[RMDB]
Notes:
Chemical mapping of a 177-nucleotide RNA with 2A3 and DMS. The data come from the RNA Mapping Database (RMDB), libraries RFM100 and RFMREP. Conditions: 150 mM KOAc, 10 mM MgCl2 and 150 mM bicine (pH 8.5), 24 C.
RNA sequence: GGGAACGACUCGAGUAGAGUCGAAAAUUGACCCAGCCAAAUCGACUCACCGUUAAAACUUCUUAACAGCUCUCCUAACAGCAUAACUAACAACUGUUUUCGUCCUUAAACCAACGAUAACAGCUGUUAGAAUGUUUCGAUUCGUCGAAACAUUCUAAAAAGAAACAACAACAACAAC
Reactivity to 2A3 in 0.01 (KOAc 150mM, MgCl2 10mM, bicine 150mM(pH8.5), 24C), signal-to-noise 7, nucleotides 027 to 126: u090u100g040a040c000c010c000a000g030c030c020a060a030a070u080c010g030a030c000u000c020a020c010c020g070u070u090a040a090a040a060c050u100u030c010u070u090a080a040c020a030g000c010u000c000u000c000c010u050a060a040c030a030g060c020a080u060a150a060c030u040a030a000c040a010a010c000u000g040u010u000u010u000c010g000u020c030c020u120u210a080a080a050c030c010a030a000c020g010a010u010a020a010c000a000g000c010u000g000u010
Reactivity to DMS in 0.01 (KOAc 150mM, MgCl2 10mM, bicine 150mM(pH8.5), 24C), signal-to-noise 4, nucleotides 027 to 126: u030u020g010a140c010c020c000a110g040c090c060a060a080a030u010c040g000a070c030u010c010a060c060c040g010u000u010a070a050a080a120c060u010u000c040u000u010a110a100c090a110g000c030u000c040u010c010c010u000a120a060c100a060g000c100a050u020a080a090c070u000a020a030c000a020a020c000u010g000u000u000u000u000c000g000u000c100c070u000u010a060a060a120c300c290a160a010c030g000a000u010a010a000c000a000g020c040u000g020u000